An RNA of 177 nucleotides, treated with 2A3 and DMS and read out base by base. For 2A3, 4,251 sequencing reads were counted. Source: RMDB library OK2TRN, as collected in RNAgym. The reactions ran in a buffer of 150 mM KOAc, 10 mM MgCl2 and 150 mM bicine (pH 8.5), at 24 C. 2A3 adducts were read by reverse transcription with SuperScript II with manganese. DMS adducts were read by reverse transcription with MarathonRT.

RNA sequence: GGGAACGACUCGAGUAGAGUCGAAAAAGGGAAACUGAAUAGGCUUGUGAUACCUAAGAAGUAUGCAGUGAAGUAUAUGCCUUUCAUAAGCGAUGAUCAAAGCGAGAAAGAGACGAGUGAAGGAGUAAUUCUAUAUGACCUUCGGGUCAUAUAGAAUAAAAGAAACAACAACAACAAC
Reactivity to 2A3 in 0.01 (KOAc 150mM, MgCl2 10mM, bicine 150mM(pH8.5), 24C), signal-to-noise 4, nucleotides 027 to 126: a010g050g000g020a050a080a010c050u070g010a020a130u070a140g060g020c020u060u100g030u040g070a040u080a070c010c010u030a050a010g040a040a010g030u020a030u060g080c020a020g060u040g220a120a010g050u070a060u010a050u260g040c020c000u040u070u020c050a040u040a110a020g020c030g060a040u070g010a010u130c060a060a060a000g060c020g020a020g030a080a070a000g050a010g010a020c030g000a010g040u070g050a030a010g020g060a030g020u060a040
Reactivity to DMS in 0.01 (KOAc 150mM, MgCl2 10mM, bicine 150mM(pH8.5), 24C), signal-to-noise 6, nucleotides 027 to 126: a080g020g000g000a070a080a090c100u000g010a110a100u000a070g010g010c030u000u010g020u000g010a070u000a050c040c040u010a100a060g010a140a160g010u000a020u000g020c030a070g010u010g000a070a080g010u000a060u010a060u010g000c120c010u000u000u010c040a040u010a070a100g000c030g010a070u010g010a070u010c080a050a070a110g010c050g000a070g000a060a060a070g000a120g000a050c080g010a060g010u000g010a060a060g000g010a090g000u010a070